[RMDB]
RNA sequence: GGGAACGACUCGAGUAGAGUCGAAAAGUUGGAUUCGUCCAACCCUCGGAUAUGGAGAAACAAAUGCAGCCAUGAUCUCAUGAAUCGGAAACGAUUCAUGAUCUCAUGGAACUACUGCAUUGUUUCUCCUAAGUCUAACUCGGUGGUUCGCCACCAAGUUAAUCUCUGCGUUCGCGCAGAGAUUAACAAAAGAAACAACAACAACAAC
Reactivity to 2A3 in 0.01 (KOAc 150mM, MgCl2 10mM, bicine 150mM(pH8.5), 24C), signal-to-noise 2, nucleotides 027 to 156: g030u000u010g000g020a030u070u150c240g060u050c110c000a020a010c040c000c020u050c080g030g000a020u010a050u170g010g000a000g000a000a000a010c030a030a130a070u010g000c000a000g020c000c000a000u000g000a030u010c000u000c020a000u000g000a000a000u000c000g000g070a060a030a030c010g000a000u000u010c000a010u000g000a000u000c020u010c010a000u000g010g020a010a010c010u100a030c000u010g000c010a000u000u000g000u000u000u000c000u000c000c000u000a000a000g000u000c000u020a070a050c050u010c150g000g020u050g010g030u040u060c220g110c120c000a020c100c030a050a010
This 207-nucleotide RNA was probed chemically with 2A3.
Values cover nucleotides 27 to 156.
Source: RMDB library RNAMAK, as collected in RNAgym.
Conditions: 150 mM KOAc, 10 mM MgCl2 and 150 mM bicine (pH 8.5), 24 C.
The 2A3 profile rests on 3,723 reads.